[RMDB]
Background
The data come from the RNA Mapping Database (RMDB), library OK3TST. This 207-nucleotide RNA was probed chemically with DMS and 2A3. Values cover nucleotides 27 to 156. The DMS profile rests on 2,030 reads. The reactions ran in a buffer of 150 mM KOAc, 10 mM MgCl2 and 150 mM bicine (pH 8.5), at 24 C. Values are in units of 0.01, from 0 to 300, in steps of 10. High DMS reactivity at an A or C suggests that its Watson-Crick edge is free.
RNA sequence: GGGAACGACUCGAGUAGAGUCGAAAAAGGAAAGGGCCAGGUUAAAUGGUAUUUUUAAGGCUAAUUUGGGAUUGACCUUAUUAUCAUUGGAUAAUCAGUUAAGGAAACAAAAAAGUAUGGAUUUAGCAGUAGAUAGAAAUGAGAAAAUUGGCCAAGGAACUAUAUGGUCCUUCGGGACCAUAUAGUUAAAAGAAACAACAACAACAAC
Reactivity to DMS in 0.01 (KOAc 150mM, MgCl2 10mM, bicine 150mM(pH8.5), 24C), signal-to-noise 1, nucleotides 027 to 156: a090g020g000a080a080a130g040g000g030c010c060a030g040g010u010u010a040a020a030u010g000g010u010a010u000u000u010u010u000a020a050g020g020c010u000a050a040u000u000u000g030g060g020a160u000u000g000a010c030c030u010u000a040u000u010a020u010c010a130u030u030g040g010a160u000a030a060u000c070a200g000u010u010a060a090g000g020a110a030a170c040a000a030a070a080a000a140g040u000a100u010g020g010a190u010u020u000a130g000c020a050g020u010a100g010a180u000a110g010a040a020a050u000g000a110g010a030a050a030a070u010u010g010g000c090c000a010a130g040g000
Reactivity to 2A3 in 0.01 (KOAc 150mM, MgCl2 10mM, bicine 150mM(pH8.5), 24C), signal-to-noise 1, nucleotides 027 to 156: a000g080g000a160a050a000g050g010g000c020c060a010g010g000u020u120a110a250a000u090g000g040u040a090u090u150u010u060u050a030a060g000g060c030u010a000a060u050u120u140g060g020g030a060u090u040g060a080c000c000u000u000a000u010u030a000u070c040a040u050u190g080g000a000u010a070a070u160c020a000g020u070u040a130a020g000g080a100a000a050c050a000a050a050a080a000a080g100u060a060u050g050g000a060u100u080u080a040g010c030a000g040u100a000g040a000u000a030g200a070a140a030u190g000a050g050a050a120a000a000u120u040g010g000c050c020a010a010g000g000